[RMDB]
RNA sequence: GGGAACGACUCGAGUAGAGUCGAAAAAUGAUAGUUAGUCUACUCGCUAUCCUAGUUACUUUGGAGUAAUCUAAAGUGUGUGUAAACGGGCGAAAGUCUGUAAAAUACUGGGGACAUAGGGUCAACAAGAACUAGUAGACCUUCGGGUCUACUAGAAGAAGACUUUAAUGUUCGCAUUAAAGUCUUCAAAAGAAACAACAACAACAAC
Reactivity to DMS in 0.01 (KOAc 150mM, MgCl2 10mM, bicine 150mM(pH8.5), 24C), signal-to-noise 2, nucleotides 027 to 156: a130u010g000a070u000a100g000u000u000a060g000u010c030u010a010c020u020c030g010c110u000a100u000c000c060u000a110g020u000u000a010c000u010u000u010g010g000a060g020u020a060a140u020c020u000a010a010a050g000u000g020u010g040u000g000u010a070a170a060c050g010g010g020c010g000a160a110a160g010u000c030u000g000u000a030a050a020a070u000a020c030u010g010g020g010g030a080c080a060u000a100g020g010g000u010c010a100a090c070a060a100g020a100a260c010u000a020g000u000a000g000a060c000c010u000u000c300g070g040g010u000c000u000a010c000u000a020g000a030a130
Reactivity to 2A3 in 0.01 (KOAc 150mM, MgCl2 10mM, bicine 150mM(pH8.5), 24C), signal-to-noise 3, nucleotides 027 to 156: a000u090g010a030u040a060g040u090u040a020g010u040c030u040a040c010u030c030g010c030u040a040u070c000c010u040a070g040u060u050a030c020u030u000u010g040g020a020g030u150a120a150u020c020u030a030a010a000g010u040g010u020g000u000g020u070a070a160a030c020g000g010g000c020g030a030a020a020g000u000c010u020g040u030a000a070a050a000u130a030c020u020g000g000g000g010a010c020a020u080a060g070g010g030u040c010a030a030c020a130a070g070a110a050c000u000a000g000u000a000g000a000c000c000u020u030c110g060g000g000u000c010u000a000c000u000a000g000a000a020